[RMDB]
Overview: This 177-nucleotide RNA was probed chemically with DMS. It was measured as part of the RMDB library OK1LIB. Reactivities are rounded to 0.1 and cut off at 0 and 3. DMS adducts were read by reverse transcription with MarathonRT. The reactions ran in a buffer of 150 mM KOAc, 10 mM MgCl2 and 150 mM bicine (pH 8.5), at 24 C.
RNA sequence: GGGAACGACUCGAGUAGAGUCGAAAACGGUGUAGGGGCCUUGACCGGCGUGAUAGCGGUCGCGCUCGACGAGACACUGGCCAAGACGACAACCAACCUUCGGCUGCCGCCACUAGCGGUGGGUAUGCACGGUAGCCGAGUUCGCUCGGCUACCGUGAAAAGAAACAACAACAACAAC
Reactivity to DMS in 0.01 (KOAc 150mM, MgCl2 10mM, bicine 150mM(pH8.5), 24C), signal-to-noise 2, nucleotides 027 to 126: c040g000g000u000g010u000a080g000g000g010g000c000c010u000u130g000a050c040c010g010g000c010g050u000g000a120u000a230g010c070g020g030u000c090g060c300g000c030u000c050g000a050c090g060a090g010a040c060a030c050u020g000g070c060c020a000a100g000a040c060g000a050c050a090a240c000c140a170a070c100c110u000u000c100g010g000c000u030g000c020c010g000c040c000a040c150u010a120g000c000g070g000u000g050g010g000u000a020u010g040